An RNA of 177 nucleotides, treated with DMS and 2A3 and read out base by base.
Source: RMDB library OK2TRN, as collected in RNAgym.
For 2A3 the reverse transcriptase was SuperScript II with manganese.
The RNA was probed in 150 mM KOAc, 10 mM MgCl2 and 150 mM bicine (pH 8.5) at 24 C.
[RMDB]
RNA sequence: GGGAACGACUCGAGUAGAGUCGAAAAGUCGGGGGAGGCCCCGGCGGCAUGGAUUUCGUGGGUAGCCUGUGCAAUGCGUACACCCAGUCGCCGCUCCCACAUCGCAUAUGUGGUUUCGGUGUCCGCGAACCAGAAGAGCAUUCGUGCUCUUCUGGUUAAAAGAAACAACAACAACAAC
Reactivity to DMS in 0.01 (KOAc 150mM, MgCl2 10mM, bicine 150mM(pH8.5), 24C), signal-to-noise 2, nucleotides 027 to 126: g020u000c040g010g000g000g020g000a200g020g010c000c010c000c010g040g010c010g020g010c060a050u010g000g000a100u000u000u000c060g020u000g000g000g040u000a120g020c040c010u000g020u010g000c070a090a080u000g000c060g000u010a060c130a090c010c000c020a120g020u000c050g000c010c030g040c040u000c070c000c030a020c050a050u000c250g010c180a090u010a040u000g020u000g010g000u000u000u000c050g010g020u000g000u010c020c020g000c070g020
Reactivity to 2A3 in 0.01 (KOAc 150mM, MgCl2 10mM, bicine 150mM(pH8.5), 24C), signal-to-noise 1, nucleotides 027 to 126: g020u020c010g020g040g000g040g050a170g130g010c000c010c000c030g020g000c000g010g000c050a060u030g020g090a050u020u070u070c060g020u050g030g080g030u040a060g030c030c010u070g060u030g020c010a050a130u170g000c050g000u060a020c000a070c070c020c030a010g060u040c050g010c000c000g000c040u060c030c070c000a000c000a010u070c120g060c160a080u050a030u300g010u030g050g070u020u040u070c030g010g010u020g050u000c030c020g040c010g040